[RMDB]
RNA sequence: GGGAACGACUCGAGUAGAGUCGAAAAUAAGAUUUGCUGAUGAUGAUGGGCUAAUUUAAGCUACCGUGGAAAGAGGGAAGAAAUGGAAGCUGCUGAUCGUAGGAAGCAGUACCUGUACUGCGCAGGGUUGCAGUGACCUAACACCAAGAAAUAAAAAGUGCUAGUGCAUAUUCGUAUGCACUAGCACAAAAGAAACAACAACAACAAC
Reactivity to 2A3 in 0.01 (KOAc 150mM, MgCl2 10mM, bicine 150mM(pH8.5), 24C), signal-to-noise 1, nucleotides 027 to 156: u240a030a070g050a130u030u000u100g050c000u020g040a020u040g020a010u040g010a030u050g050g050g000c040u020a040a130u170u140u090a030a010g030c000u020a060c000c010g060u150g050g000a130a030a000g010a010g050g000g000a040a000g070a040a130a000u060g020g000a060a000g020c000u000g000c040u080g030a110u100c040g030u070a040g000g040a030a000g040c000a000g000u020a030c010c000u050g000u090a040c000u040g000c020g000c140a050g000g000g040u060u000g030c010a010g000u000g040a000c000c000u010a050a020c020a000c060c030a040a040g070a150a210a010u110a040a130a000a000a000